The record gives the reactivity of an RNA of 177 nucleotides to DMS and 2A3. Values are in units of 0.01, from 0 to 300, in steps of 10. Source: RMDB library OK1LIB, as collected in RNAgym. Conditions: 150 mM KOAc, 10 mM MgCl2 and 150 mM bicine (pH 8.5), 24 C.
[RMDB]
RNA sequence: GGGAACGACUCGAGUAGAGUCGAAAAUCGUCAUCCGAAUUACUACUGUCCGACUCAUUUUGCUGCAUGUGGAAUUAAAUUUUCGGAAUAAAUCUCAAUUUUUCAUGCAAUUUCUGAUUUUCAGCACGCAUAUUAAUAUCUUCGGAUAUUAAUAUGCAAAAGAAACAACAACAACAAC
Reactivity to DMS in 0.01 (KOAc 150mM, MgCl2 10mM, bicine 150mM(pH8.5), 24C), signal-to-noise 4, nucleotides 027 to 126: u020c100g010u010c050a090u000c040c020g000a090a070u020u010a090c040u020a050c070u000g000u000c020c010g010a200c050u020c060a090u020u010u000u010g010c090u000g020c040a010u010g000u000g000g000a020a010u000u020a030a070a080u000u000u000u010c120g000g010a130a070u020a030a030a020u000c080u000c100a020a000u000u010u000u010u000c010a030u010g010c030a060a100u010u020u010c030u000g000a120u020u000u010u010c060a060g000c190a130c190
Reactivity to 2A3 in 0.01 (KOAc 150mM, MgCl2 10mM, bicine 150mM(pH8.5), 24C), signal-to-noise 9, nucleotides 027 to 126: u080c020g060u040c020a070u020c020c010g030a050a040u120u040a100c040u020a020c020u040g050u050c020c020g070a070c030u030c070a120u050u110u150u220g060c050u030g000c010a030u030g020u050g030g050a040a040u060u070a090a100a130u110u120u030u070c060g070g050a050a050u150a100a080a060u050c070u010c070a030a030u010u020u010u060u080c030a030u060g040c020a050a100u030u090u040c050u060g100a160u060u030u040u130c030a020g030c060a020c100